[RMDB]
RNA sequence: GGGAACGACUCGAGUAGAGUCGAAAAGAUAUGGAAUCCGGUUUUACCGAUCACCAGACAUGUACCACGUCGGAAACGACGUGAAGUACAACAGCUGGUUGAUCGGUAAAACCGGAUUCCUAAGUCAGUAAAGUAAGGACUUCGGUCCUUACUUUACAAAAGAAACAACAACAACAAC
Reactivity to DMS in 0.01 (KOAc 150mM, MgCl2 10mM, bicine 150mM(pH8.5), 24C), signal-to-noise 1, nucleotides 027 to 126: g020a030u010a300u000g000g010a000a000u000c000c010g010g010u030u000u000u000a010c000c000g010a020u000c020a020c010c000a010g010a130c140a300u000g000u000a000c000c000a000c000g000u000c000g000g020a120a110a140c000g000a010c000g000u000g000a050a110g030u000a000c000a030a160c300a180g030c020u000g000g010u010u030g020a000u010c000g000g000u000a000a000a000a000c000c050g000g010a000u000u000c000c000u030a010a080g000u010c030a170
Source: RMDB library TTRINS, as collected in RNAgym. Chemical mapping of a 177-nucleotide RNA with DMS. The reactions ran in a buffer of 150 mM KOAc, 10 mM MgCl2 and 150 mM bicine (pH 8.5), at 24 C.